[RMDB]
The record gives the reactivity of an RNA of 177 nucleotides to 2A3 and DMS.
For DMS, 4,084 sequencing reads were counted.
Reactivities are given for positions 27 through 126.
Source: RMDB library OK2TST, as collected in RNAgym.
The reactions ran in a buffer of 150 mM KOAc, 10 mM MgCl2 and 150 mM bicine (pH 8.5), at 24 C.
High 2A3 reactivity points to a flexible backbone, as in loops and unpaired stretches.
For 2A3, 4,607 sequencing reads were counted.
RNA sequence: GGGAACGACUCGAGUAGAGUCGAAAAGGAAACUUAACCUGCGUUAGGGAGAAGGAUGUAGGGAAGCUUCUGACCCUGGAAGAUAUUAAGUGAGGACUUGAAGAAUAAGUAGAAGUUAGCCUGGUAAGGCUUCAAUAACGUUCGCGUUAUUGAAGCCAAAAGAAACAACAACAACAAC
Reactivity to 2A3 in 0.01 (KOAc 150mM, MgCl2 10mM, bicine 150mM(pH8.5), 24C), signal-to-noise 3, nucleotides 027 to 126: g000g000a050a040a000c020u040u020a050a160c010c020u020g020c040g030u030u100a090g040g060g020a090g040a080a000g060g010a010u050g040u040a030g000g000g030a040a010g010c010u020u000c010u030g100a090c000c000c000u020g100g020a040a010g020a060u060a060u200u160a110a010g040u050g070a040g000g030a020c020u050u040g040a050a030g020a050a100u120a130a030g050u050a030g020a100a000g010u010u080a030g010c000c010u040g080g000u090a120a060
Reactivity to DMS in 0.01 (KOAc 150mM, MgCl2 10mM, bicine 150mM(pH8.5), 24C), signal-to-noise 4, nucleotides 027 to 126: g000g000a070a070a070c010u000u000a100a120c030c010u010g020c060g010u010u010a170g020g020g000a050g010a090a070g010g010a030u010g020u000a040g020g010g020a080a070g010c040u000u000c030u010g000a130c030c010c010u010g010g010a080a050g000a090u010a060u000u000a040a060g020u010g000a070g000g000a060c030u000u000g010a070a070g010a070a040u010a060a070g010u010a070g000a060a050g000u000u000a080g000c030c010u000g010g010u020a060a110